[RMDB]
This 207-nucleotide RNA was probed chemically with 2A3. Reactivities are given for positions 27 through 156. For 2A3 the reverse transcriptase was SuperScript II with manganese. Conditions: 150 mM KOAc, 10 mM MgCl2 and 150 mM bicine (pH 8.5), 24 C. Reactivities are rounded to 0.1 and cut off at 0 and 3. The 2A3 profile rests on 598 reads. It was measured as part of the RMDB library OK3TST.
RNA sequence: GGGAACGACUCGAGUAGAGUCGAAAAUUCUUUUUUUGUCUAAUAGUUCAAAACCUUUUUGCGAAAAUUCUAAUGAGUUUUGUGCACUUAUCAGAUUGGCUUUAGUUGGAGCAAUGUUUUCCAUUACUUAUCACCUCUAUAGUGCUUUUCUAAUGCACCUCAUCAUACCAUUCGUGGUAUGAUGAGGAAAAGAAACAACAACAACAAC
Reactivity to 2A3 in 0.01 (KOAc 150mM, MgCl2 10mM, bicine 150mM(pH8.5), 24C), signal-to-noise 2, nucleotides 027 to 156: u050u060c050u130u080u020u070u020u170u020g120u020c030u050a100a120u110a180g020u100u110c060a070a110a080a110c050c000u110u020u030u050u090g150c090g120a150a030a060a050u180u060c060u160a050a110u140g000a000g070u050u030u030u070g050u040g010c000a000c020u040u080a020u070c050a070g090a140u020u080g040g000c000u000u000u140a010g000u000u020g000g000a010g040c050a120a210u170g070u050u010u050u000c010c020a020u100u050a030c030u090u070a060u140c040a040c040c030u030c020u060a040u030a020g030u030g000c000u060u080u050u000c070u140a070a070u160g000c040a040